[RMDB]
RNA sequence: GGGAACGACUCGAGUAGAGUCGAAAACGGAGAGGCAGGAGGUCCCGAGGAGUAUCCAAGCAAAGAAGGGGAAGGAUCUCGAGGAAGACAUCUCCCAAGAAGAAGCGGGAACAAUCUCAAGAAGAGGAAACGUGUUCGUUCGCGAACACGAAAAGAAACAACAACAACAAC
Reactivity to DMS in 0.01 (KOAc 150mM, MgCl2 10mM, bicine 150mM(pH8.5), 24C), signal-to-noise 3, nucleotides 027 to 129: c000g000g000a090g000a080g030g110c130a000g000g000a000g070g000u000c050c000c030g030a090g000g030a040g050u050a090u080c070c140a130a090g040c110a040a030a050g090a100a090g010g000g030g100a050a030g100g000a040u040c030u000c000g000a070g010g040a070a000g030a060c140a050u050c140u020c040c010c020a120a060g020a110a050g040a080a040g020c020g040g020g010a060a060c180a040a070u090c000u110c050a110a090g050a050a060g000a050g040g050a030a110a080
Reactivity to 2A3 in 0.01 (KOAc 150mM, MgCl2 10mM, bicine 150mM(pH8.5), 24C), signal-to-noise 2, nucleotides 027 to 129: c030g000g000a000g010a000g000g020c050a010g020g030a030g020g010u010c000c000c020g000a050g000g000a000g000u010a030u020c040c020a060a020g050c030a090a050a080g100a040a020g040g000g000g020a020a010g030g010a020u040c040u020c040g030a000g010g030a020a020g020a000c050a080u030c040u000c040c000c000a020a030g020a040a000g010a010a000g000c020g010g020g000a000a000c020a030a090u030c010u030c050a060a060g030a020a010g000a010g020g000a030a010a020